[RMDB]
Structure probing data (2A3 and DMS) for a 207-nucleotide construct. Source: RMDB library RNAMAK, as collected in RNAgym. DMS adducts were read by reverse transcription with MarathonRT. The 2A3 profile rests on 6,576 reads. The reactions ran in a buffer of 150 mM KOAc, 10 mM MgCl2 and 150 mM bicine (pH 8.5), at 24 C.
RNA sequence: GGGAACGACUCGAGUAGAGUCGAAAAACCAGUUCGCUGGUAAAGACGGGGUCUCAUGAAGAGCCCAACAGCGAUGAACUACAGCUGAAGCCUCCACGGCUGCAUCGACAUGGGUGGUCAUGAGACGGAGGCACCCUAAGGGAGCGUUCGCGCUCAAACUUCCACUACUAUUCGUAGUAGUGGAAGUAAAAGAAACAACAACAACAAC
Reactivity to 2A3 in 0.01 (KOAc 150mM, MgCl2 10mM, bicine 150mM(pH8.5), 24C), signal-to-noise 6, nucleotides 027 to 156: a000c010c000a010g020u080u080c230g030c130u020g020g030u120a130a120a050g110a040c080g010g010g020g020u000c000u000c010a000u000g010a030a040g130a070g140c030c010c040a100a040c090a030g000c010g000a000u000g010a030a040c090u190a110c270a000g000c000u010g000a050a000g020c010c010u000c000c010a020c010g020g000c000u010g000c010a000u000c010g070a090c090a300u300g000g000g010u060g030g060u020c000a010u010g020a000g010a010c010g000g000a010g000g000c010a020c000c000c000u060a100a130g190g080g020a010g000c000g020u110u170c280g000c000g010c060u010c010a040a090
Reactivity to DMS in 0.01 (KOAc 150mM, MgCl2 10mM, bicine 150mM(pH8.5), 24C), signal-to-noise 2, nucleotides 027 to 156: a110c020c000a150g010u000u000c160g070c020u020g030g020u000a030a140a170g000a090c100g020g020g010g010u010c000u000c000a060u010g000a040a100g010a300g000c000c000c000a080a060c080a060g020c010g020a040u000g010a070a070c060u000a300c000a030g000c000u000g000a040a080g020c010c000u010c000c020a300c040g040g030c010u000g000c030a050u000c000g010a080c010a210u020g000g010g020u000g030g000u000c010a000u000g020a060g000a040c000g010g020a020g090g000c000a040c020c010c010u010a080a120g030g010g000a030g020c010g010u000u010c150g000c040g010c000u000c000a030a070